RNA sequence: GGGAACGACUCGAGUAGAGUCGAAAAAACGAGUUGAACAACUCAAGAUCCGUGGCGAGGUCAGACUCAACGAUACCAAGAUCGAGAACAUGGAAUCUGGUGCUCGAACUGAAGAACUUUACUCGAAGGCUAUGAAGGCCAUGAGUGUCUACUCAGGGCUGCCUGAUAUCUUCGGAUAUCAGGCAGCAAAAGAAACAACAACAACAAC
Reactivity to DMS in 0.01 (KOAc 150mM, MgCl2 10mM, bicine 150mM(pH8.5), 24C), signal-to-noise 1, nucleotides 027 to 156: a100a100c020g010a070g020u000u010g010a250a120c010a010a070c020u010c030a080a180g000a290u000c010c030g020u000g010g010c060g010a200g010g020u000c070a150g000a070c050u000c070a120a150c010g000a180u000a160c030c040a110a110g000a060u000c030g010a060g010a160a180c030a090u010g040g000a060a030u000c020u000g000g000u000g000c060u010c040g000a080a130c070u010g030a060a090g030a000a070c020u000u000u000a040c020u000c000g010a050a040g030g020c040u000a070u000g050a070a140g050g000c000c000a090u000g000a090g040u010g010u000c120u000a090c030u000c010a130g020g000
Reactivity to 2A3 in 0.01 (KOAc 150mM, MgCl2 10mM, bicine 150mM(pH8.5), 24C), signal-to-noise 3, nucleotides 027 to 156: a000a010c060g000a010g010u060u080g110a120a010c040a050a010c080u070c080a010a020g040a060u020c020c020g050u040g030g030c020g030a030g020g010u060c040a020g040a090c020u010c070a070a050c080g020a040u070a180c070c050a090a070g000a090u050c020g020a000g020a150a040c040a030u060g030g000a030a090u040c030u030g020g040u030g040c010u000c020g030a080a040c040u080g030a050a030g020a010a090c000u100u110u020a050c010u040c040g050a100a060g000g020c010u010a030u250g150a090a070g030g000c000c010a020u030g020a040g010u050g060u040c040u080a040c000u010c040a040g060g160
Notes: Chemical mapping of a 207-nucleotide RNA with DMS and 2A3. Reactivities are given for positions 27 through 156. The reactions ran in a buffer of 150 mM KOAc, 10 mM MgCl2 and 150 mM bicine (pH 8.5), at 24 C. For DMS the reverse transcriptase was MarathonRT. 2A3 adducts were read by reverse transcription with SuperScript II with manganese.